Chemical mapping of a 177-nucleotide RNA with DMS and 2A3. The DMS profile rests on 2,697 reads. It was measured as part of the RMDB library OK2TST. Reactivities are rounded to 0.1 and cut off at 0 and 3. The reactions ran in a buffer of 150 mM KOAc, 10 mM MgCl2 and 150 mM bicine (pH 8.5), at 24 C. DMS adducts were read by reverse transcription with MarathonRT.

[RMDB]
RNA sequence: GGGAACGACUCGAGUAGAGUCGAAAACGUCGCGUAGGUCUGGGAAGUCCGCCUGGGAGAUUGGGAACAGACCCGAGUAGACCAUGGGCUUGGGCUCUUCGUAGCCUUGGAGUGCUUCUUCGGCGCCGGGAUACUCGUUAUUCGUAACGAGUAUCCCAAAAGAAACAACAACAACAAC
Reactivity to DMS in 0.01 (KOAc 150mM, MgCl2 10mM, bicine 150mM(pH8.5), 24C), signal-to-noise 3, nucleotides 027 to 126: c090g010u010c080g020c070g010u010a090g030g010u010c050u000g010g020g020a100a050g010u000c080c060g020c020c040u010g000g000g020a080g000a150u000u000g010g000g000a090a110c150a110g000a120c020c020c000g000a070g000u000a080g000a090c070c050a090u000g000g010g020c030u000u000g010g000g000c010u000c050u000u020c150g020u000a060g010c020c000u010u000g010g000a090g010u000g000c010u000u000c040u000u000c090g000g010c090g000c130c080
Reactivity to 2A3 in 0.01 (KOAc 150mM, MgCl2 10mM, bicine 150mM(pH8.5), 24C), signal-to-noise 2, nucleotides 027 to 126: c010g030u010c030g000c040g080u080a060g030g040u000c060u050g040g020g030a040a000g030u010c030c020g000c050c000u050g010g030g000a090g050a080u050u140g010g030g040a030a100c030a080g110a130c000c000c000g010a010g040u090a020g030a080c030c020a130u120g010g040g000c000u040u060g000g010g000c030u000c000u130u130c080g190u130a010g000c000c000u010u030g030g020a060g000u080g010c000u020u040c000u060u040c020g010g000c030g050c030c000